[RMDB]
Source: RMDB library OK1LIB, as collected in RNAgym. This 177-nucleotide RNA was probed chemically with DMS and 2A3. For DMS the reverse transcriptase was MarathonRT. The reactions ran in a buffer of 150 mM KOAc, 10 mM MgCl2 and 150 mM bicine (pH 8.5), at 24 C.

RNA sequence: GGGAACGACUCGAGUAGAGUCGAAAACUGCAUGGCCAACACGUCGACAUCGGCGCGCCCAAGCCAAUCGAGGACACGAUCCAACCGGGUGCGAAUCGAAUUCACAUUCCAGGUGGCCAGCCGCAGCUCCCUUUGGAGGCUUCGGCCUCCAAAGGGAAAAAGAAACAACAACAACAAC
Reactivity to DMS in 0.01 (KOAc 150mM, MgCl2 10mM, bicine 150mM(pH8.5), 24C), signal-to-noise 1, nucleotides 027 to 126: c000u010g030c000a190u000g000g000c060c000a060a090c100a300c000g000u010c250g000a160c140a020u000c040g130g140c040g000c000g000c000c090c060a000a010g030c240c300a100a000u000c000g000a040g060g100a110c240a100c190g000a050u000c110c030a170a290c270c020g050g060g060u000g000c180g040a010a080u000c010g060a030a110u000u000c210a000c070a150u000u180c000c100a180g030g100u000g000g010c010c030a000g000c010c130g000c000a000g000c150
Reactivity to 2A3 in 0.01 (KOAc 150mM, MgCl2 10mM, bicine 150mM(pH8.5), 24C), signal-to-noise 2, nucleotides 027 to 126: c000u000g040c010a020u010g000g000c040c010a090a060c040a020c210g140u180c150g040a030c000a060u130c010g040g000c000g040c000g010c000c000c010a060a010g030c000c030a070a060u200c030g080a040g000g110a080c100a030c300g100a100u040c040c060a060a000c060c020g000g030g000u000g020c000g000a000a110u110c000g000a030a060u120u050c050a010c030a100u160u030c070c030a010g140g000u000g010g020c000c000a010g040c030c040g000c000a000g010c000